Source: RMDB library OK2TST, as collected in RNAgym. Structure probing data (DMS) for a 177-nucleotide construct. Conditions: 150 mM KOAc, 10 mM MgCl2 and 150 mM bicine (pH 8.5), 24 C. The DMS profile rests on 2,222 reads.
RNA sequence: GGGAACGACUCGAGUAGAGUCGAAAACAGUCGAUCCGAUCUCCGCCCGCCGGUUUCUCGUCUCGCGAACCGCCGUUGAUUCGCUACGCCGCGCUCGUGAUUCGUAUUCCAAUCGGCGCGGCUUCGACAUGAGGCCAGUAUUCGUACUGGCCUCAUGAAAAGAAACAACAACAACAAC
Reactivity to DMS in 0.01 (KOAc 150mM, MgCl2 10mM, bicine 150mM(pH8.5), 24C), signal-to-noise 2, nucleotides 027 to 126: c170a080g000u000c040g030a040u010c050c030g000a090u000c050u020c080c080g020c020c020c030g030c040c010g020g020u000u000u000c040u000c020g020u000c080u000c050g010c030g000a050a090c030c040g010c110c060g010u010u000g000a150u000u000c080g030c130u020a070c130g000c040c020g000c030g030c010u000c120g020u000g020a070u000u000c150g020u000a160u010u010c070c110a060a040u010c050g010g000c000g010c020g010g010c010u000u010c040g010a130